[RMDB]
RNA sequence: GGGAACGACUCGAGUAGAGUCGAAAAUUCAAAAUCAGUCUGAGAGAAUACAGCUUUAGAGAUGUCGGGCGUGUUGCCAGCCUCACACCAUUGUAUUUCAAUUGGCUCUAAUCCAGCCAGGUCACCUUUUCCUAAAAUAACAUCUGAGACACAGAGACUUUUAUUAUCCUUUCGAGGAUAAUAAAAGAAAAGAAACAACAACAACAAC
Reactivity to 2A3 in 0.01 (KOAc 150mM, MgCl2 10mM, bicine 150mM(pH8.5), 24C), signal-to-noise 3, nucleotides 027 to 156: u050u000c010a010a020a010a120u060c020a020g130u000c020u080g070a050g000a000g020a110a040u090a070c020a020g020c020u090u150u140a050g030a040g000a120u040g040u090c060g010g000g020c040g020u110g080u120u100g050c030c030a010g000c000c010u050c000a040c000a010c020c010a050u010u100g020u070a060u020u190u070c050a070a060u090u050g000g000c000u030c010u030a040a030u030c040c000a000g000c010c000a010g020g020u040c010a050c020c020u040u070u080u020c010c000u060a070a080a100a090u090a070a050c030a050u040c010u020g050a020g030a070c040a010c010a100g050a030g010a020
Reactivity to DMS in 0.01 (KOAc 150mM, MgCl2 10mM, bicine 150mM(pH8.5), 24C), signal-to-noise 2, nucleotides 027 to 156: u010u010c050a070a070a130a090u000c040a110g030u000c040u030g000a180g010a240g000a120a060u010a080c060a090g020c080u000u010u000a090g000a130g000a040u000g020u010c070g020g000g020c040g030u000g010u010u010g030c030c040a160g010c030c010u000c120a020c040a070c060c000a110u000u000g030u000a060u010u000u010c050a100a160u010u000g000g030c000u010c030u010a070a100u000c120c130a030g040c000c030a020g000g030u010c030a040c020c030u000u020u000u020c010c010u000a040a060a060a080u000a090a060c080a050u000c030u000g010a220g020a170c060a060c030a050g000a130g020a220